[RMDB]
RNA sequence: GGGAACGACUCGAGUAGAGUCGAAAAGAUAUGGAAUAGGGACGGCUCUCGAGACAGACAUGCUCUACCCAUCGGAAACGAUGGAUGAGCAACAGCUGUGUCGAGAGCCGUCCCUAUUCCUAAGUCAGAAUAUGAGACAGUUCGCUGUCUCAUAUUCAAAAGAAACAACAACAACAAC
Reactivity to DMS in 0.01 (KOAc 150mM, MgCl2 10mM, bicine 150mM(pH8.5), 24C), signal-to-noise 3, nucleotides 027 to 126: g010a080u000a300u010g010g010a010a010u000a030g020g000g020a030c000g010g000c000u010c000u000c000g000a020g010a020c000a010g010a050c140a290u000g000c000u010c010u010a200c100c000c000a000u000c000g000g000a130a110a210c020g040a030u000g000g010a020u010g000a020g000c010a010a040c280a170g020c020u000g010u000g010u000c000g010a010g000a000g010c000c000g000u000c000c000c000u000a000u000u000c000c000u010a010a040g010u000c060a150
Overview:
Structure probing data (DMS) for a 177-nucleotide construct.